RNA sequence: GGGAACGACUCGAGUAGAGUCGAAAACUUUUUGAUGAAAAGGUGGACACUACAUCACCAAUACAAGUUUAAUGGCUACAUACGGCACUCAGUUUACACUUACAUUACAUAUGCAUUUUAACACAUCAGAUGCGGAUUGCUUCGGCAAUCCGCAUCUAAAAGAAACAACAACAACAAC
Reactivity to 2A3 in 0.01 (KOAc 150mM, MgCl2 10mM, bicine 150mM(pH8.5), 24C), signal-to-noise 1, nucleotides 027 to 126: c000u050u000u290u300u000g080a220u040g000a000a000a000a020g000g070u000g000g000a000c000a000c040u200a000c000a040u000c000a020c010c050a000a000u220a040c140a150a150g110u000u000u190a110a030u040g010g020c040u000a080c000a100u060a000c100g040g000c000a000c000u040c000a020g000u000u300u000a000c000a000c000u100u000a060c000a000u180u000a040c080a040u240a020u000g250c040a040u000u000u140u240a140a120c180a000c000a250u140c120
Structure probing data (2A3) for a 177-nucleotide construct. Values cover nucleotides 27 to 126. The reactions ran in a buffer of 150 mM KOAc, 10 mM MgCl2 and 150 mM bicine (pH 8.5), at 24 C. It was measured as part of the RMDB library RFM100. For 2A3 the reverse transcriptase was SuperScript II with manganese.